[RMDB]
RNA sequence: GGGAACGACUCGAGUAGAGUCGAAAAUAAUAGCUUGUGCAUCUGCUUUGUUACCUCUAUACCAUUGUGUAUAGUACCUUACACUGCAUUGUACUAUUAUGCUACAUUCUAUUUUACUAAUGAGCCUCAGCCCUCACGUUCGCGUGAGGGAAAAGAAACAACAACAACAAC
Reactivity to DMS in 0.01 (KOAc 150mM, MgCl2 10mM, bicine 150mM(pH8.5), 24C), signal-to-noise 2, nucleotides 027 to 129: u050a110a070u030a050g060c070u000u000g000u030g010c030a000u100c130u060g080c040u060u020u010g020u000u080a040c110c130u070c020u030a010u010a010c000c060a290u060u150g000u050g030u000a050u020a030g010u000a040c000c000u000u000a030c030a030c000u040g000c000a070u070u000g020u040a020c060u060a060u090u050a070u090g030c030u040a070c130a050u030u010c020u020a060u050u040u030u020a110c090u020a060a060u080g050a000g000c020c010u040c090a040g060
Reactivity to 2A3 in 0.01 (KOAc 150mM, MgCl2 10mM, bicine 150mM(pH8.5), 24C), signal-to-noise 8, nucleotides 027 to 129: u120a010a010u030a010g010c030u030u080g000u000g000c000a020u020c060u070g000c000u010u010u030g020u020u040a050c020c040u040c020u000a010u000a000c020c050a290u160u290g060u020g000u150a000u000a000g010u020a010c010c010u030u020a000c020a000c000u000g000c000a010u010u060g010u000a010c020u070a050u250u060a080u200g000c010u010a020c020a020u020u030c000u020a080u030u050u030u020a050c040u060a090a150u180g020a010g010c010c000u040c050a020g040